The data come from the RNA Mapping Database (RMDB), library OK2TST. The record gives the reactivity of an RNA of 177 nucleotides to 2A3 and DMS. DMS adducts were read by reverse transcription with MarathonRT. For 2A3, 1,812 sequencing reads were counted. As a SHAPE reagent, 2A3 marks flexible, mostly unpaired nucleotides at the ribose 2'-OH.

RNA sequence: GGGAACGACUCGAGUAGAGUCGAAAAAGUCAACCAGGAACUCGUGCCAGCUGGGAUCGACCGAGGAGGGGUCGUCGCGGAACUUGCGGUACAUCUCUUCGACCAGCCAUUCGUUUUGCCCGAAUGGGCAAGCAUGCCGGUUCGCCGGCAUGCUUGCAAAAGAAACAACAACAACAAC
Reactivity to 2A3 in 0.01 (KOAc 150mM, MgCl2 10mM, bicine 150mM(pH8.5), 24C), signal-to-noise 1, nucleotides 027 to 126: a020g030u060c030a030a060c010c020a030g060g060a040a030c030u010c090g070u050g000c020c010a010g050c030u040g000g000g000a070u080c040g000a000c000c040g010a040g000g030a010g000g060g020g030u000c020g000u050c000g020c020g080g040a110a120c070u090u190g000c020g040g000u000a020c000a060u040c000u000c000u040u040c000g010a030c000c000a020g050c020c000a020u050u030c020g070u000u040u150u170g020c020c010c020g050a090a040u110g060g000
Reactivity to DMS in 0.01 (KOAc 150mM, MgCl2 10mM, bicine 150mM(pH8.5), 24C), signal-to-noise 2, nucleotides 027 to 126: a040g010u000c090a080a200c050c030a080g010g000a120a090c050u010c070g020u020g010c130c060a070g020c030u000g020g000g020a060u000c130g000a060c100c030g000a040g000g000a040g010g010g000g010u000c050g020u010c010g040c030g030g000a070a130c250u000u020g020c030g020g020u000a060c040a100u010c000u010c020u000u000c010g000a170c030c020a090g000c010c050a030u000u000c100g030u000u000u000u000g010c100c060c010g000a080a050u010g010g000